[RMDB]
RNA sequence: GGGAACGACUCGAGUAGAGUCGAAAACCGGACUUCGGUCCGGAAAAAGAUAUGGAUCUUUUAGUUCGUCAUCGGAAACGAUGAUACGAAGGGGAGAUCCUAAGUCAAAAACCAGGUUCGCCUGGAACGUUAACAGGUGGUUCGCCACCUGUUAACGAAAAGAAACAACAACAACAAC
Reactivity to 2A3 in 0.01 (KOAc 150mM, MgCl2 10mM, bicine 150mM(pH8.5), 24C), signal-to-noise 1, nucleotides 027 to 126: c000c000g000g010a020c010u060u050c300g100g000u010c020c030g020g030a060a050a000a020a030g040a010u080a020u110g000g000a010u030c000u010u020u010u040a300g110u060u080c010g030u040c010a000u000c020g120g010a070a050a030c000g000a000u040g040a030u060a090c070g020a020a020g120g010g000g030a020g010a000u010c020c000u010a120a070g000u000c040a000a000a000a130a230c000c020a020g050g000u050u030c290g010c030c010u000g000g030a050a000
Reactivity to DMS in 0.01 (KOAc 150mM, MgCl2 10mM, bicine 150mM(pH8.5), 24C), signal-to-noise 1, nucleotides 027 to 126: c010c010g000g000a020c000u010u000c170g030g010u010c000c000g000g010a000a050a080a090a040g020a010u000a300u000g010g000a000u000c000u010u000u010u010a110g000u010u000c000g010u000c000a030u000c010g020g010a150a070a180c040g050a010u000g010a060u010a010c110g020a000a000g000g010g000g000a000g000a030u000c000c000u000a000a050g000u000c030a060a080a040a080a080c000c010a020g000g010u000u010c130g010c030c000u010g000g000a060a040
Source: RMDB library TTRDEL, as collected in RNAgym. This 177-nucleotide RNA was probed chemically with 2A3 and DMS. As a SHAPE reagent, 2A3 marks flexible, mostly unpaired nucleotides at the ribose 2'-OH.